[RMDB]
RNA sequence: GGGAACGACUCGAGUAGAGUCGAAAAAAUUACUAUUCUUAUAAUCUGCCUACUAUGUGUGACAUCAAACAAAUGUUGUUCUGCAUGGAAGUUGUAAACAAGUACUUCGAAAUCUAUGACGGUGGUUCAUAUGCCUAUAGUUCGCUAUAGGCAUAUGAAAAGAAACAACAACAACAAC
Reactivity to 2A3 in 0.01 (KOAc 150mM, MgCl2 10mM, bicine 150mM(pH8.5), 24C), signal-to-noise 1, nucleotides 027 to 126: a000a000u140u130a080c030u080a090u140u080c040u080u140a110u030a150a100u030c020u040g020c000c000u010a080c000u010a010u090g010u010g020u000g020a000c010a050u000c020a040a030a290c030a010a090a000u140g010u010u020g010u120u000c000u000g000c020a020u050g020g020a020a020g020u100u070g070u070a110a090a020c050a150a000g040u030a010c040u010u030c010g030a100a120a030u000c010u030a060u100g040a030c010g020g020u060g020g000u010u020
Reactivity to DMS in 0.01 (KOAc 150mM, MgCl2 10mM, bicine 150mM(pH8.5), 24C), signal-to-noise 2, nucleotides 027 to 126: a090a130u000u000a070c020u000a160u000u000c040u010u020a070u000a080a050u010c040u000g010c140c040u020a140c040u010a020u000g030u010g020u000g020a050c030a030u000c070a110a070a100c300a100a060a060u010g000u000u000g010u010u000c030u000g000c040a020u000g010g010a060a050g010u000u010g010u030a030a040a070c180a070a050g000u000a010c200u000u010c060g010a030a070a060u000c050u000a050u000g020a240c210g000g000u000g010g000u000u000